This 207-nucleotide RNA was probed chemically with DMS and 2A3. 2A3 adducts were read by reverse transcription with SuperScript II with manganese. Source: RMDB library OK3TST, as collected in RNAgym. Reactivities are rounded to 0.1 and cut off at 0 and 3. DMS adducts were read by reverse transcription with MarathonRT. The reactions ran in a buffer of 150 mM KOAc, 10 mM MgCl2 and 150 mM bicine (pH 8.5), at 24 C.
[RMDB]
RNA sequence: GGGAACGACUCGAGUAGAGUCGAAAACACCUCCUCUGUGAGGGCGGGUGAGUCGACCGCCGACUGCGACUCCCAGGAUGCCUCGCGCCCGCCUUUCCGCGGGAGGCCAGACGGCUGAGGGUGCCGGCAGCGGCUGGAAGCGGGAGGCCAGUCCUGGAUCAUUACUAAUAUUCGUAUUAGUAAUGAUAAAAGAAACAACAACAACAAC
Reactivity to DMS in 0.01 (KOAc 150mM, MgCl2 10mM, bicine 150mM(pH8.5), 24C), signal-to-noise 1, nucleotides 027 to 156: c030a040c000c000u010c010c000u040c210u030g000u000g010a040g010g020g050c050g010g070g030u000g000a060g000u000c030g000a220c020c030g020c000c030g010a070c070u000g000c000g000a070c020u000c000c000c030a030g000g000a080u000g010c000c010u000c020g000c040g020c000c000c020g060c000c070u000u000u000c140c090g030c070g000g000g010a130g020g030c040c000a000g000a070c030g000g020c000u010g000a060g010g020g000u000g040c030c020g030g000c010a060g020c020g000g000c030u010g020g010a060a110g030c070g010g000g010a000g010g000c050c120a190g030u000c000c000u000g020g010
Reactivity to 2A3 in 0.01 (KOAc 150mM, MgCl2 10mM, bicine 150mM(pH8.5), 24C), signal-to-noise 3, nucleotides 027 to 156: c050a060c000c010u030c020c020u230c170u230g150u170g070a010g000g000g010c010g010g010g010u050g020a000g000u010c000g000a030c010c010g010c050c130g140a130c070u150g030c020g000a010c000u000c000c000c010a000g000g010a020u090g000c010c000u030c010g160c010g020c100c010c010g030c030c030u110u180u020c050c030g000c010g020g000g040a060g040g000c000c000a070g010a040c030g020g020c010u060g100a110g040g120g060u110g050c000c020g080g000c050a030g070c000g060g040c020u080g020g030a060a000g020c000g000g050g000a010g020g010c030c010a050g070u000c000c000u000g010g000